[RMDB]
RNA sequence: GGGAACGACUCGAGUAGAGUCGAAAAGAUAUGGAGCUGAUCUCUAGCGUGUACGACGAUCACAGGAAAGUCAUGGGUCGGAAACGACCCAUGUCGUCCUGUGGGAGUAUCGGGUCAGCUCCUAAGUCAAAGCGUUUCCACUUCGGUGGAAACGCAAGUUGAACUAACUGUUCGCAGUUAGUUCAACAAAAGAAACAACAACAACAAC
Reactivity to 2A3 in 0.01 (KOAc 150mM, MgCl2 10mM, bicine 150mM(pH8.5), 24C), signal-to-noise 3, nucleotides 027 to 156: g000a000u030a000u040g010g010a000g000c010u000g010a040u100c120u050c140u200a050g060c220g240u300g030u080a030c050g200a050c000g000a070u010c000a000c000a000g010g020a050a150a020g020u010c010a000u000g010g000g000u020c000g010g000a010a020a000c000g000a000c000c060c010a010u000g010u000c030g170u000c000c000u000g000u000g000g000g000a010g000u000a000u020c020g000g010g010u000c000a000g000c000u000c000c000u000a000a000g000u000c010a150a020a000g000c000g000u000u000u000c000c010a010c010u040u040c230g110g010u030g000g000a000a010a010c000g000c000a000a000

Structure probing data (2A3) for a 207-nucleotide construct. It was measured as part of the RMDB library RNAMAK. Reactivities are given for positions 27 through 156.